[RMDB]
RNA sequence: GGGAACGACUCGAGUAGAGUCGAAAAAGCAACGCCGCGUGGAGGAUGACACUUUUCGGAGCGUAAACUCCUUUUCUUAGGGAAGAAUUCUGACGGUACCUAAGGAAUAAGCACCGGCUAACUCCGUCGGAUAGGGCUUUUUCGAAAGCCCUAUCCGAAAAGAAACAACAACAACAAC
Reactivity to 2A3 in 0.01 (KOAc 150mM, MgCl2 10mM, bicine 150mM(pH8.5), 24C), signal-to-noise 1, nucleotides 027 to 126: a000g040c070a010a050c030g000c000c030g120c100g000u020g010g000a000g030g040a050u300g010a000c000a000c040u050u000u020u110c170g150g000a030g010c010g020u010a010a020a000c020u000c000c000u000u000u000u000c010u000u000a000g000g010g050a060a090g030a160a160u300u090c050u110g060a040c100g030g030u070a020c000c000u000a010a000g040g000a020a000u060a030a020g000c010a000c050c000g020g000c000u020a060a000c060u030c040c070g000u000